[RMDB]
RNA sequence: GGGAACGACUCGAGUAGAGUCGAAAACUGUAUUCGUACAGCUGCCGACCUUUGUGAGAAGGGAGCAGCAGACCUCGCUUCGUCCCAUUGGGACGAAGAACUACGAGGUCUGCUGCGAAGAACUUCUCACUCUGGUACGAUCGCUAUUCGUAGCGAACUCAUUCAUGUGAUUCGUCACAUGAAUGAGAAAAGAAACAACAACAACAAC
Reactivity to DMS in 0.01 (KOAc 150mM, MgCl2 10mM, bicine 150mM(pH8.5), 24C), signal-to-noise 1, nucleotides 027 to 156: c020u000g010u000a020u000u000c250g030u000a040c030a000g020c010u000g010c000c020g000a060c010c000u000u000u000g000u010g000a040g020a030a030g020g010g030a300g000c010a010g020c010a060g000a000c010c020u000c010g060c000u010u100c000g140u000c000c000c020a300u000u000g030g050g060a060c060g000a010a070g000a040a130c060u010a180c000g030a010g050g000u000c020u010g020c000u010g000c030g000a020a120g020a090a180c000u000u000c010u000c000a000c000u000c030u000g020g030u000a080c050g000a090u000c000g010c000u000a050u010u000c140g060u000a000g020c000g000a110a300
Reactivity to 2A3 in 0.01 (KOAc 150mM, MgCl2 10mM, bicine 150mM(pH8.5), 24C), signal-to-noise 4, nucleotides 027 to 156: c020u010g000u020a050u060u110c260g030u060a020c000a010g030c030u090g080c010c010g010a010c010c000u000u000u000g000u000g000a000g000a000a000g010g010g010a030g000c010a000g010c000a000g000a000c000c000u000c010g000c000u000u000c010g000u000c000c000c100a300u150u300g010g000g020a010c050g000a010a010g010a010a020c190u290a060c040g000a000g010g000u000c010u000g000c010u000g000c000g000a020a010g000a010a000c000u000u000c000u000c000a000c000u000c000u010g010g000u030a160c040g060a060u040c010g010c010u020a030u080u110c220g110u070a010g020c010g020a070a060

Structure probing data (DMS and 2A3) for a 207-nucleotide construct. The reactions ran in a buffer of 150 mM KOAc, 10 mM MgCl2 and 150 mM bicine (pH 8.5), at 24 C. For 2A3 the reverse transcriptase was SuperScript II with manganese. For DMS, 2,607 sequencing reads were counted.